[RMDB]
RNA sequence: GGGAACGACUCGAGUAGAGUCGAAAACUUGUAAUUGCAAAGCGUGGUUUUAAUACCACUAUGCAAGCCAAGUCUAAGUCGCUGAACAUCUAUAAUGUAUUAGGCAUCAGGUAAGUACACAAUUCUCGUACAAACAAAGCUUCGGCUUUGUUUGUACAAAAGAAACAACAACAACAAC
Reactivity to DMS in 0.01 (KOAc 150mM, MgCl2 10mM, bicine 150mM(pH8.5), 24C), signal-to-noise 1, nucleotides 027 to 126: c010u000u000g000u020a170a080u000u000g010c000a050a130a220g010c280g050u000g010g010u010u010u010u010a140a150u010a010c020c000a010c030u000a220u000g000c000a000a010g020c300c010a000a050g000u000c030u000a070a040g020u030c050g070c030u000g000a080a050c070a110u020c030u000a020u010a030a130u000g030u000a090u000u030a130g000g000c190a120u010c030a000g000g000u020a010a050g000u030a000c010a100c190a060a260u020u000c020u000c020
Reactivity to 2A3 in 0.01 (KOAc 150mM, MgCl2 10mM, bicine 150mM(pH8.5), 24C), signal-to-noise 1, nucleotides 027 to 126: c010u020u080g100u110a090a180u090u020g000c000a040a050a110g140c110g050u010g020g030u020u070u020u170a140a080u150a120c000c000a000c010u010a030u000g020c040a010a010g040c010c000a000a010g000u010c010u060a090a000g020u030c020g050c130u040g020a060a030c010a070u000c080u170a150u090a190a190u110g200u190a240u070u030a070g010g000c000a000u040c010a020g010g020u070a060a000g070u060a020c040a000c010a040a080u000u000c000u000c000
Description:
Structure probing data (DMS and 2A3) for a 177-nucleotide construct. Values cover nucleotides 27 to 126. The DMS profile rests on 526 reads.